The record gives the reactivity of an RNA of 177 nucleotides to DMS. DMS (dimethyl sulfate) methylates the pairing face of unpaired adenines and cytosines. Reactivities are given for positions 27 through 126. It was measured as part of the RMDB library TTRDES. The reactions ran in a buffer of 150 mM KOAc, 10 mM MgCl2 and 150 mM bicine (pH 8.5), at 24 C.
RNA sequence: GGGAACGACUCGAGUAGAGUCGAAAAGAUAUGGAGCCUGCUCAGCAACAGCUAGUGUUUCGGAAACGAAACCUAGACAUGCUGAGCAGGCUCCUAAGUCAAACGAAAGUAGUUCGCUACUUUCGAACUUCUAUCAUCUCUUCGGAGAUGAUAGAAGAAAAGAAACAACAACAACAAC
Reactivity to DMS in 0.01 (KOAc 150mM, MgCl2 10mM, bicine 150mM(pH8.5), 24C), signal-to-noise 3, nucleotides 027 to 126: g010a060u000a250u010g000g000a010g040c000c010u000g010c010u000c000a020g010c010a080a080c290a150g000c000u000a000g010u020g000u000u000u000c000g020g000a040a040a110c010g010a000a000a010c010c000u000a010g010a010c080a300u000g010c010u000g010a010g010c000a010g010g000c000u000c000c000u000a000a050g010u000c010a130a090a280c030g010a010a010a010g020u010a000g030u010u020c270g020c000u000a010c000u010u010u000c000g010a060a160